[RMDB]
Chemical mapping of a 177-nucleotide RNA with DMS and 2A3. For 2A3 the reverse transcriptase was SuperScript II with manganese.
RNA sequence: GGGAACGACUCGAGUAGAGUCGAAAAAAAAGAUAUGGACUGUCUCCCCACCCAGCAGAGAGACUUUGAUCUAAUAUCGGAAACGAUAUUAGGGAGUCUCGAUCUGGAGGACAGUCCUAAGUCAAAAGUACUAAAACAAGUUCGCUUGUUUUAGUACAAAAGAAACAACAACAACAAC
Reactivity to DMS in 0.01 (KOAc 150mM, MgCl2 10mM, bicine 150mM(pH8.5), 24C), signal-to-noise 4, nucleotides 027 to 126: a040a070a060a070g010a110u000a180u010g000g010a020c000u010g010u000c010u000c150c000c010c100a300c070c010c010a010g030c160a030g010a300g000a010g000a010c000u010u000u020g000a090u000c000u000a010a000u000a000u000c010g010g010a150a060a130c010g000a010u000a010u000u000a010g010g010g010a010g000u000c000u010c000g000a130u000c010u000g000g020a070g010g000a010c000a010g000u000c000c000u000a000a050g030u000c100a060a060a160a110
Reactivity to 2A3 in 0.01 (KOAc 150mM, MgCl2 10mM, bicine 150mM(pH8.5), 24C), signal-to-noise 2, nucleotides 027 to 126: a000a010a020a070g110a060u190a080u140g000g000a000c000u010g010u050c010u100c040c040c010c030a020c010c000c000a010g000c200a000g050a000g000a000g010a050c000u110u180u050g080a060u070c000u000a010a000u010a000u010c010g070g000a070a090a040c000g000a010u000a010u000u010a000g000g000g010a010g010u000c000u010c000g000a040u040c010u010g000g010a000g010g010a000c000a000g000u000c000c000u000a050a010g090u020c030a110a020a020a200

The DMS profile rests on 3,196 reads.